[RMDB]
RNA sequence: GGGAACGACUCGAGUAGAGUCGAAAAGAUAUGGAUCCCGUAGAGAGGAUCCCUGUAUCGGAAACGAUACAGAUUUCUACCCACCUCUAUUGGAUCCUAAGUCAAAACCGGGGGUUCGCCCCCGGAAUCAGUUAUACUAGUUCGCUAGUAUAACUGAAAAAGAAACAACAACAACAAC
Reactivity to DMS in 0.01 (KOAc 150mM, MgCl2 10mM, bicine 150mM(pH8.5), 24C), signal-to-noise 4, nucleotides 027 to 126: g000a040u010a300u010g000g010a000u000c000c000c060g010u000a010g000a020g020a170g020g000a020u010c110c040c000u010g010u000a000u000c010g000g000a100a070a140c010g010a010u000a010c000a000g000a040u000u000u000c040u000a130c050c030c100a300c140c010u000c010u000a010u000u000g000g000a030u000c000c000u000a050a110g000u000c030a120a080a110a120c010c000g000g000g020g010g040u000u010c250g000c000c000c000c000c000g000g000a020a020
Reactivity to 2A3 in 0.01 (KOAc 150mM, MgCl2 10mM, bicine 150mM(pH8.5), 24C), signal-to-noise 2, nucleotides 027 to 126: g000a000u040a030u080g000g010a000u000c000c000c030g010u000a010g000a010g020a050g140g080a060u040c020c000c000u010g000u000a010u010c000g010g000a040a020a020c010g000a000u000a000c010a000g010a000u020u050u050c050u110a170c030c020c020a110c030c010u000c000u000a010u010u030g010g000a010u020c000c010u020a080a010g020u010c020a000a020a140a190c010c010g010g000g020g000g000u080u100c240g110c030c000c010c000c000g000g000a000a030